Structure probing data (DMS and 2A3) for a 177-nucleotide construct. Conditions: 150 mM KOAc, 10 mM MgCl2 and 150 mM bicine (pH 8.5), 24 C. Reactivities are given for positions 27 through 126. High 2A3 reactivity points to a flexible backbone, as in loops and unpaired stretches. Source: RMDB library OK2TRN, as collected in RNAgym.
RNA sequence: GGGAACGACUCGAGUAGAGUCGAAAAUUUUUGGGUUUUCAAGAACGACAAUCCGGUGAACCCCUAUGCUGCUUCGUUCGAGAGAAGGCUGGCGAUUAAAAAACGCGACGUCGCCAGUGACGACGUCGUCGUUUCGGUACUUCGGUACCGAAACGACAAAAGAAACAACAACAACAAC
Reactivity to DMS in 0.01 (KOAc 150mM, MgCl2 10mM, bicine 150mM(pH8.5), 24C), signal-to-noise 3, nucleotides 027 to 126: u010u000u010u000u000g000g000g000u000u000u020u000c040a060a240g000a070a070c070g000a060c200a070a070u000c090c050g010g000u000g000a130a070c100c020c030c090u000a130u030g000c020u000g020c080u000u000c030g020u010u000c060g010a270g010a130g000a010a040g020g020c060u000g000g020c030g000a070u000u020a010a070a040a060a080a050c140g000c050g000a020c040g010u000c030g030c010c020a150g010u010g000a060c040g010a000c030g020u000c020
Reactivity to 2A3 in 0.01 (KOAc 150mM, MgCl2 10mM, bicine 150mM(pH8.5), 24C), signal-to-noise 2, nucleotides 027 to 126: u130u090u030u050u070g060g010g000u020u020u010u120c070a080a050g060a120a040c020g080a010c050a030a090u040c000c030g040g020u060g080a090a100c020c000c000c000u080a040u300g020c050u020g030c030u030u020c030g040u060u040c050g060a040g010a020g010a180a010g060g000c050u090g040g010c010g010a030u080u290a060a100a090a040a040a030c100g040c010g070a030c040g000u010c000g010c000c000a070g020u080g030a020c000g000a000c020g060u080c040